[RMDB]
RNA sequence: GGGAACGACUCGAGUAGAGUCGAAAAUCGCCACACCUACCUACUAUGCGCAAUUCGCCGACACGGGUGGCAUCAACACGGGCGAUAAGGUGGAAAUCGCUGGGGUGAACGUCGGGCUGGUGCGCUCGGUUGAGAGAGUAUUCGUACUCUCUCAACCAAAAGAAACAACAACAACAAC
Reactivity to 2A3 in 0.01 (KOAc 150mM, MgCl2 10mM, bicine 150mM(pH8.5), 24C), signal-to-noise 8, nucleotides 027 to 126: u110c020g030c020c000a040c010a040c010c020u090a060c030c000u040a100c040u090a120u230g010c020g020c010a020a080u120u090c030g010c020c010g030a040c010a020c090g060g000g000u020g020g010c010a030u120c030a010a090c020a020c080g060g000g010c010g000a020u020a100a080g130g050u150g030g110a070a110a030u050c020g000c040u050g010g030g040g040u050g030a080a010c040g010u010c010g010g030g000c080u130g040g000u030g010c030g000c010u050c050
Reactivity to DMS in 0.01 (KOAc 150mM, MgCl2 10mM, bicine 150mM(pH8.5), 24C), signal-to-noise 3, nucleotides 027 to 126: u010c070g000c020c000a070c020a040c020c020u010a130c020c060u000a110c240u070a090u010g030c050g000c060a060a040u050u010c010g010c010c060g000a030c040a110c150g010g010g020u010g020g000c110a110u020c070a080a030c040a090c080g010g000g010c000g010a010u000a060a070g010g000u010g000g000a080a110a090u020c030g050c020u000g000g010g000g020u000g020a080a100c070g000u010c060g000g010g010c030u000g000g000u010g000c010g010c000u040c090